[RMDB]
RNA sequence: GGGAACGACUCGAGUAGAGUCGAAAAAAAGGUUUUAUCUCUCUUGCACUACAUGUUCAGUGUGGUCUGCAGAGUCCUGUAGUCAUGGUCCUCUCACUUCAGGACCCAGAAGAUGGAUCUUGAAACUUGCUUCCAUAAGUUUUGAAGCAGGAAAGGGGACAUUGUCAGAAUUCGUUCUGACAAUGUCAAAAGAAACAACAACAACAAC
Reactivity to DMS in 0.01 (KOAc 150mM, MgCl2 10mM, bicine 150mM(pH8.5), 24C), signal-to-noise 3, nucleotides 027 to 156: a070a020a020g010g000u000u000u000u010a040u000c020u000c030u000c040u000u000g020c030a150c010u010a020c010a060u030g020u020u020c210a180g040u010g050u000g020g000u000c070u010g010c030a060g010a060g010u000c010c000u030g020u010a070g010u030c060a100u010g020g000u010c040c020u000c060u000c110a100c110u000u010c020a020g020g010a040c010c010c020a080g020a070a100g000a170u000g020g010a030u010c020u000u010g010a100a050a160c030u000u000g010c010u000u010c010c080a270u010a080a100g010u000u000u020u000g000a040a010g000c010a020g010g010a070a040a070g020g000g010
Reactivity to 2A3 in 0.01 (KOAc 150mM, MgCl2 10mM, bicine 150mM(pH8.5), 24C), signal-to-noise 4, nucleotides 027 to 156: a000a000a000g120g030u110u060u090u120a100u030c050u000c000u000c020u060u100g020c030a010c020u030a000c020a030u090g120u220u260c060a080g010u050g000u020g020g040u030c090u060g010c030a000g010a020g040u010c000c000u040g030u050a020g050u060c060a070u100g030g030u020c010c010u030c020u030c030a060c050u040u050c030a020g010g020a020c010c040c000a070g020a150a010g030a040u060g000g000a010u000c000u020u050g080a060a050a070c000u000u020g010c000u010u000c020c030a110u070a260a160g020u030u030u100u160g010a000a000g000c000a010g010g020a090a080a040g030g000g000
About this RNA
An RNA of 207 nucleotides, treated with DMS and 2A3 and read out base by base. 2A3 adducts were read by reverse transcription with SuperScript II with manganese. The RNA was probed in 150 mM KOAc, 10 mM MgCl2 and 150 mM bicine (pH 8.5) at 24 C. Reactivities are given for positions 27 through 156. The DMS profile rests on 5,991 reads. It was measured as part of the RMDB library OK3TST.